[RMDB]
RNA sequence: GGGAACGACUCGAGUAGAGUCGAAAAGUGACCUGGGGCACGCUAGUUAACCUCUCUGAGGCCAGCCCCACGUGGGUCAAGGGAACUCAAAAUGCACGGCCUCAAAAUGCAUAGCUGCAGGGCGUUGCUGGACUGCGUGGAAUGAGCUGCAAAGUGAGGACUUUUACUAUUUCGAUAGUAAAAGUCCAAAAGAAACAACAACAACAAC
Reactivity to 2A3 in 0.01 (KOAc 150mM, MgCl2 10mM, bicine 150mM(pH8.5), 24C), signal-to-noise 2, nucleotides 027 to 156: g080u080g030a060c000c030u090g000g000g000g000c050a010c080g040c040u080a040g120u120u100a100a080c030c020u060c000u000c100u150g010a000g020g030c010c020a010g030c000c020c050c010a010c030g020u170g070g020g000u020c020a060a050g130g010g010a130a150c020u030c180a100a120a020a020u180g000c090a040c100g080g020c030c030u010c000a040a040a000a000u080g020c000a070u050a180g050c010u080g000c050a010g010g000g000c030g050u070u100g030c000u000g000g050a010c020u040g010c000g020u040g000g030a090a060u070g020a040g000c030u030g010c060a110a070a040g040u150g020a040
Reactivity to DMS in 0.01 (KOAc 150mM, MgCl2 10mM, bicine 150mM(pH8.5), 24C), signal-to-noise 1, nucleotides 027 to 156: g000u000g000a180c010c000u000g000g020g000g070c050a120c020g040c070u040a100g010u010u020a060a080c010c020u000c020u000c070u020g040a080g040g030c000c000a180g040c000c010c010c030a040c140g020u020g020g010g010u000c010a090a090g000g020g010a090a080c010u000c070a070a040a080a080u000g040c020a080c030g030g030c020c040u010c010a050a090a160a090u000g020c060a050u010a110g000c100u000g000c050a090g010g020g000c090g000u000u010g020c020u010g010g020a080c010u000g010c000g030u020g030g000a080a110u010g020a160g120c000u020g020c050a030a110a120g020u000g000a260